[RMDB]
Chemical mapping of a 207-nucleotide RNA with DMS and 2A3.
RNA sequence: GGGAACGACUCGAGUAGAGUCGAAAAGAUAGAUAGUACUCGUAAAAACUCUCUUUCGCAGGCCGCGUAUUUUGAGAGACGAAGCCGUGAAGUAGCGAAAGCUACGACGAAGCGCGUGACCGGCCGAUGCGCGAACAGCAUCCGGUACGAGUACGAACAGUGGUAGCUGAUUCGUCAGCUACCACUGAAAAGAAACAACAACAACAAC
Reactivity to DMS in 0.01 (KOAc 150mM, MgCl2 10mM, bicine 150mM(pH8.5), 24C), signal-to-noise 1, nucleotides 027 to 156: g000a140u040a060g010a100u030a100g100u000a010c010u010c000g060u010a030a130a070a150a000c030u000c000u000c020u000u000u000c060g060c010a080g030g070c050c030g050c060g000u020a070u000u000u000u030g030a060g050a130g020a110c030g000a140a090g090c000c010g010u020g050a030a190g000u000a000g000c000g040a180a150a150g000c000u000a000c000g020a130c000g010a060a120g000c020g050c050g030u000g020a050c010c080g000g000c040c020g010a080u000g050c000g020c020g000a100a060c060a160g020c030a300u000c040c000g060g000u000a030c020g020a030g030u000a000c040g000a080a210
Reactivity to 2A3 in 0.01 (KOAc 150mM, MgCl2 10mM, bicine 150mM(pH8.5), 24C), signal-to-noise 2, nucleotides 027 to 156: g050a050u170a010g040a010u120a060g000u010a010c020u000c000g030u030a020a010a020a160a120c020u020c000u020c000u010u040u030c000g020c090a090g120g070c030c080g010c040g010u050a130u030u090u110u110g010a010g000a000g040a050c050g060a030a020g000c000c010g040u070g060a090a020g010u000a000g000c010g030a070a050a010g000c000u000a000c060g020a010c020g060a110a010g000c010g000c030g040u020g040a010c010c000g010g020c050c040g040a020u040g000c040g030c050g060a140a110c040a040g000c000a020u160c000c030g000g000u010a000c000g000a000g000u000a000c000g000a050a000
Values cover nucleotides 27 to 156. For 2A3 the reverse transcriptase was SuperScript II with manganese. DMS adducts were read by reverse transcription with MarathonRT. DMS (dimethyl sulfate) methylates the pairing face of unpaired adenines and cytosines. The reactions ran in a buffer of 150 mM KOAc, 10 mM MgCl2 and 150 mM bicine (pH 8.5), at 24 C.